[RMDB]
RNA sequence: GGGAACGACUCGAGUAGAGUCGAAAACACAUGCCAUCAUAUCCGUUAAGAACUCUUAACUCUGAUGGCUUUCGAGUUAUGUGGUGCAUUGAAGCUCUCCCUUCAAUUCAACGUACCGUUCCGUCAACGACAUGAGACUAUUCGUAGUCUCAUGUCGAAAAGAAACAACAACAACAAC
Reactivity to 2A3 in 0.01 (KOAc 150mM, MgCl2 10mM, bicine 150mM(pH8.5), 24C), signal-to-noise 4, nucleotides 027 to 126: c060a010c010a070u140g010c020c000a000u010c010a010u040a040u240c050c030g010u000u000a000a020g050a290a240c060u050c010u290u000a000a000c010u000c030u040g010a010u000g000g010c000u000u040u000c010g000a010g000u070u080a080u150g120u130g090g080u040g010c010a030u000u030g020a020a010g010c020u010c020u050c090c010c000u010u040c030a030a050u020u040c030a030a030c040g020u030a030c040c000g000u020u030c010c010g140u090c050a080a050
Reactivity to DMS in 0.01 (KOAc 150mM, MgCl2 10mM, bicine 150mM(pH8.5), 24C), signal-to-noise 5, nucleotides 027 to 126: c180a110c190a060u010g010c000c000a000u000c000a010u010a050u000c290c150g000u000u000a010a010g010a280a140c300u000c000u000u000a000a010c010u000c040u000g000a000u000g000g000c000u010u000u000c040g010a040g010u000u000a040u000g010u000g010g020u000g000c050a050u010u010g010a020a000g010c070u010c050u000c050c060c010u000u000c070a050a070u000u000c040a040a030c050g020u000a020c040c020g010u000u000c010c000g000u010c090a070a130